The record gives the reactivity of an RNA of 177 nucleotides to 2A3.
[RMDB]
RNA sequence: GGGAACGACUCGAGUAGAGUCGAAAAUUGAGACCUGCUUCCUAUAUAUUGUAACUCUCUUUGGAUUAUUGCUUCUUGGUCCAUUUCAUUUAAUUUUUUAGCAAAGAUUCCAACUUGUACGAAAGUAAUUACCACCUCGGUUCGCCGAGGUGGUAAUAAAAGAAACAACAACAACAAC
Reactivity to 2A3 in 0.01 (KOAc 150mM, MgCl2 10mM, bicine 150mM(pH8.5), 24C), signal-to-noise 1, nucleotides 027 to 126: u110u030g060a060g000a000c000c010u000g060c040u000u030c050c000u040a050u080a050u000a030u100u300g280u210a150a200c000u000c000u000c000u230u010u040g030g030a000u110u000a170u060u120g010c030u050u000c010u010u060g040g010u050c000c060a020u040u070u000c040a130u070u050u270a110a080u080u090u030u030u000u020a040g000c020a050a130a130g000a090u240u000c000c000a040a130c140u060u120g050u020a090c000g060a120a240a000g000u080a060

Source: RMDB library OK1LIB, as collected in RNAgym.